[RMDB]
RNA sequence: GGGAACGACUCGAGUAGAGUCGAAAAGAGGGGAGGAGUGAAGGACGUGACAUCUCGCCAGUGGAAGCAAGUCCAAGCAGGACUGUCCCGAGCGCUGGAGAUAAUUAGAAGCCCUUUGUGCUUCGUAAUUACCCAUUAAUUUCGAUUAAUGGGUAAUAAAAGAAACAACAACAACAAC
Reactivity to 2A3 in 0.01 (KOAc 150mM, MgCl2 10mM, bicine 150mM(pH8.5), 24C), signal-to-noise 8, nucleotides 027 to 126: g090a020g000g020g000g010a030g010g000a030g020u100g050a050a050g020g020a010c040g030u050g040a030c020a100u040c030u030c030g040c030c010a040g020u080g120g050a060a030g070c060a060a010g020u000c010c000a040a020g140c060a050g060g020a010c000u020g030u020c010c020c010g030a060g010c090g000c030u050g070g010a030g010a030u160a080a080u200u130a060g000a040a000g000c010c030c040u060u140u170g070u130g010c000u010u000c000g000u010a020
Reactivity to DMS in 0.01 (KOAc 150mM, MgCl2 10mM, bicine 150mM(pH8.5), 24C), signal-to-noise 9, nucleotides 027 to 126: g010a090g010g010g010g010a060g010g000a060g020u000g010a090a070g000g010a070c100g010u000g000a100c150a080u000c060u000c070g010c050c030a060g010u010g010g010a080a090g010c120a080a040g010u000c010c010a090a150g020c230a140g000g000a020c020u000g000u000c030c020c020g000a140g010c110g010c030u000g000g000a060g010a050u010a050a090u010u010a090g000a030a040g010c010c020c260u010u000u010g010u010g010c000u000u000c010g000u010a040